Structure probing data (DMS and 2A3) for a 177-nucleotide construct. DMS (dimethyl sulfate) methylates the pairing face of unpaired adenines and cytosines. For 2A3, 2,508 sequencing reads were counted. The RNA was probed in 150 mM KOAc, 10 mM MgCl2 and 150 mM bicine (pH 8.5) at 24 C. Source: RMDB library OK1LIB, as collected in RNAgym.
[RMDB]
RNA sequence: GGGAACGACUCGAGUAGAGUCGAAAAGAAAAGAUGUGUAAGUCGUCACAUCGAACGACGAAAAGCUACGUAAGCGCUCGUAGCAAAAGCGCGAAACGAUAUUACAGUAUGUCGGACUGGAAAGAAAGGGAUAGUAAAUCUUCGGAUUUACUAUCCCAAAAGAAACAACAACAACAAC
Reactivity to DMS in 0.01 (KOAc 150mM, MgCl2 10mM, bicine 150mM(pH8.5), 24C), signal-to-noise 3, nucleotides 027 to 126: g000a120a060a150a100g010a000u030g040u000g030u020a050a150g000u030c070g010u000c020a020c040a020u000c010g010a060a080c020g010a060c010g010a110a090a180a120g000c130u020a080c000g000u000a040a300g010c030g000c000u000c040g020u000a220g060c200a050a050a120a040g000c030g000c010g000a120a070a040c020g000a160u010a050u010u020a070c040a020g060u020a040u010g000u000c020g000g000a040c010u000g000g050a090a030a100g060a060a130a160
Reactivity to 2A3 in 0.01 (KOAc 150mM, MgCl2 10mM, bicine 150mM(pH8.5), 24C), signal-to-noise 3, nucleotides 027 to 126: g140a010a130a000a010g040a020u040g000u010g000u090a010a170g110u100c040g030u020c010a000c010a100u030c040g020a080a010c010g050a000c020g020a020a000a120a030g000c010u080a040c050g030u070a070a040g020c030g010c120u020c000g070u050a020g050c050a130a000a000a000g020c050g000c010g070a120a140a010c010g010a030u030a030u100u170a030c060a000g040u120a080u170g050u030c000g000g050a030c030u040g080g040a150a060a020g140a100a080a130